The record gives the reactivity of an RNA of 207 nucleotides to 2A3. Conditions: 150 mM KOAc, 10 mM MgCl2 and 150 mM bicine (pH 8.5), 24 C. Reactivities are given for positions 27 through 156.
RNA sequence: GGGAACGACUCGAGUAGAGUCGAAAAACAGUACCAGCUGCUACGGGAGCUGGUACUGAACUUUCAUGGAGUUAAGAAACCACGUAAACAAAGCGGAACCGAAAAGCUAAACGAGUAGGAAGAAUAAAUAGGUACCACCACUUCGGUGGUGGUACAACACACUGGUACCGUUCGCGGUACCAGUGUGAAAAGAAACAACAACAACAAC
Reactivity to 2A3 in 0.01 (KOAc 150mM, MgCl2 10mM, bicine 150mM(pH8.5), 24C), signal-to-noise 2, nucleotides 027 to 156: a000c000a000g000u000a000c000c000a010g010c000u190g020c000u050a060c100g070g000g000a000g000c000u000g000g000u000a000c000u000g010a000a000c000u020u080u060c030a090u080g060g000a040g020u100u110a110a070g050a110a060a010c010c020a070c060g040u110a090a120a100c100a050a030a050g010c010g000g030a070a020c010c010g000a000a000a010a000g050c090u190a150a050a050c000g000a010g000u020a000g050g040a060a040g010a040a060u280a090a100a020u140a030g120g060u000a010c000c000a000c000c000a000c010u000u060c210g010g000u000g000g010u000g000g000u000a000c000a000a000